[RMDB]
RNA sequence: GGGAACGACUCGAGUAGAGUCGAAAAGCCAUCGCUUUCGAGCGAUGGCAUUGCCCAAAGAGGACCUGGGGGUGUGUGGGCUGCUAAACUCAUCAGCCGUUCUACCGCUAAAUUUCGAUUUAGCGAAAUUAACUUUCGCAUUCGUGCGAAAGUUAAUAAAAGAAACAACAACAACAAC
Reactivity to 2A3 in 0.01 (KOAc 150mM, MgCl2 10mM, bicine 150mM(pH8.5), 24C), signal-to-noise 1, nucleotides 027 to 126: g000c000c000a000u000c010g020c060u060u120u190c300g110a010g020c020g000a010u010g010g020c020a000u020u140g090c010c000c000a020a050a000g140a020g030g040a070c000c000u020g000g010g050g050g000u000g020u020g010u060g000g030g040c000u030g020c010u120a180a000a000c030u010c000a030u000c060a010g040c010c010g030u030u000c010u120a210c000c040g020c020u020a000a000a090u100u100u080c230g060a000u010u010u000a000g000c050g000a050a000
Reactivity to DMS in 0.01 (KOAc 150mM, MgCl2 10mM, bicine 150mM(pH8.5), 24C), signal-to-noise 2, nucleotides 027 to 126: g000c000c000a000u000c010g010c000u010u000u000c190g010a010g040c000g020a020u000g010g020c000a000u000u010g000c010c000c000a070a120a140g020a100g000g000a050c040c050u000g010g000g000g010g020u000g020u010g010u000g020g010g000c020u010g000c080u000a050a070a060c080u000c040a050u000c050a020g010c020c020g000u000u000c030u000a150c120c040g010c000u010a010a010a010u000u000u010c150g000a040u000u000u000a000g010c010g010a040a040
Chemical mapping of a 177-nucleotide RNA with 2A3 and DMS. Source: RMDB library M2PK50, as collected in RNAgym. For DMS, 2,271 sequencing reads were counted.